[RMDB]
Structure probing data (2A3 and DMS) for a 177-nucleotide construct. The 2A3 profile rests on 27,349 reads. The DMS profile rests on 35,866 reads. The reactions ran in a buffer of 150 mM KOAc, 10 mM MgCl2 and 150 mM bicine (pH 8.5), at 24 C.
RNA sequence: GGGAACGACUCGAGUAGAGUCGAAAAAAGGACGUAUUUGUACCGUAUCCGUCGAAGGCAUGACGUUUCACAGUCCGGUCAAGGUGGGCGAUGUGGUCUGCUGCUACGGCCGCUGCAUGAAGAUCGGGUCAUUAUAAGAUUUCGAUCUUAUAAUGACAAAAGAAACAACAACAACAAC
Reactivity to 2A3 in 0.01 (KOAc 150mM, MgCl2 10mM, bicine 150mM(pH8.5), 24C), signal-to-noise 9, nucleotides 027 to 126: a000a010g100g010a040c050g040u100a170u070u210u170g070u080a130c020c010g020u030a050u030c040c020g020u030c040g060a070a020g070g010c050a030u050g020a040c030g020u000u060u060c080a070c020a030g040u000c020c010g000g000u020c020a050a040g060g000u040g030g010g010c030g020a060u080g030u050g060g040u040c070u100g060c040u040g020c010u060a050c050g050g000c010c010g000c020u050g030c010a050u110g050a080a020g010a040u070c030g060g000
Reactivity to DMS in 0.01 (KOAc 150mM, MgCl2 10mM, bicine 150mM(pH8.5), 24C), signal-to-noise 9, nucleotides 027 to 126: a080a080g010g010a050c030g010u000a120u010u000u010g010u000a100c040c030g010u000a100u000c060c020g010u000c040g020a110a100g000g010c080a050u000g000a060c080g010u000u000u000c050a080c080a080g000u000c030c020g010g010u000c040a060a090g010g020u000g010g000g010c030g010a080u010g010u000g010g010u010c070u000g010c070u000g010c060u000a090c100g000g000c030c060g000c030u000g010c070a060u000g010a090a100g000a050u000c040g010g000